[RMDB]
RNA sequence: GGGAACGACUCGAGUAGAGUCGAAAAAAAAUGAACAAGAUGGAGUAGUAAGAAAACAAUUUAACGCUACUGAUAAACAUGUGACUUGGUCAAUUGAGUUCUUCGCUUAUGAAGCAACAAUUGUAUGUACAGCAAGUAAAGCUGGAACUAAAUUUAACGCUCCUUAAGAGUUCGCUCUUAAGGAGCGAAAAGAAACAACAACAACAAC
Reactivity to 2A3 in 0.01 (KOAc 150mM, MgCl2 10mM, bicine 150mM(pH8.5), 24C), signal-to-noise 1, nucleotides 027 to 156: a000a000a030a000u050g020a020a010c030a010a060g070a040u120g030g070a030g000u000a040g010u100a200a000g020a080a090a030a000c080a120a080u100u120u000a140a040c030g000c020u050a000c040u040g030a080u070a120a100a020c030a020u130g000u020g030a000c030u000u000g000g000u000c000a000a070u050u110g030a050g000u010u020c000u000u030c020g000c000u070u090a070u300g030a020a000g000c000a000a100c000a040a030u050u070g000u030a020u080g030u030a010c000a000g030c000a000a220g180u150a090a070a000g020c000u050g000g000a000a000c000u100a000a030a280u300u300u300a050a000